[RMDB]
Chemical mapping of a 177-nucleotide RNA with DMS and 2A3.
RNA sequence: GGGAACGACUCGAGUAGAGUCGAAAAUUGUGCAUUGAGUCUCACGCCUGUUUUCAUCUGCCUAAAUGGGGAGUUCCACGCAGCGUGAUGGGUGUCCUCUCUGUGCUCACAUUGCCGGGGACAGAUGACAUCUGGUACACUUCGGUGUACCAGAUGUAAAAGAAACAACAACAACAAC
Reactivity to DMS in 0.01 (KOAc 150mM, MgCl2 10mM, bicine 150mM(pH8.5), 24C), signal-to-noise 2, nucleotides 027 to 126: u020u000g020u000g030c070a110u010u010g010a110g020u000c050u010c050a070c130g010c030c060u000g000u010u000u030u000c030a080u000c020u010g000c030c050u010a070a050a090u030g000g030g000g000a160g010u010u000c040c040a050c140g030c080a050g020c080g010u000g010a040u010g010g010g020u000g000u010c060c040u010c010u000c000u010g010u000g000c010u010c040a060c160a180u010u010g020c090c090g010g000g010g010a070c060a030g000a030u000g000
Reactivity to 2A3 in 0.01 (KOAc 150mM, MgCl2 10mM, bicine 150mM(pH8.5), 24C), signal-to-noise 2, nucleotides 027 to 126: u040u030g030u020g030c020a050u030u100g020a020g090u060c030u010c080a030c050g040c030c000u050g000u050u040u040u030c050a030u000c020u040g110c010c000u130a210a200a220u270g000g030g000g020a020g000u030u040c030c000a080c020g050c040a080g000c070g080u040g020a120u070g040g000g060u070g000u000c000c010u010c000u000c010u010g020u070g070c040u060c020a100c020a130u040u270g070c060c050g020g010g020g010a030c020a030g040a030u120g030
For DMS, 2,620 sequencing reads were counted. It was measured as part of the RMDB library OK2TST. For DMS the reverse transcriptase was MarathonRT. Reactivities are given for positions 27 through 126.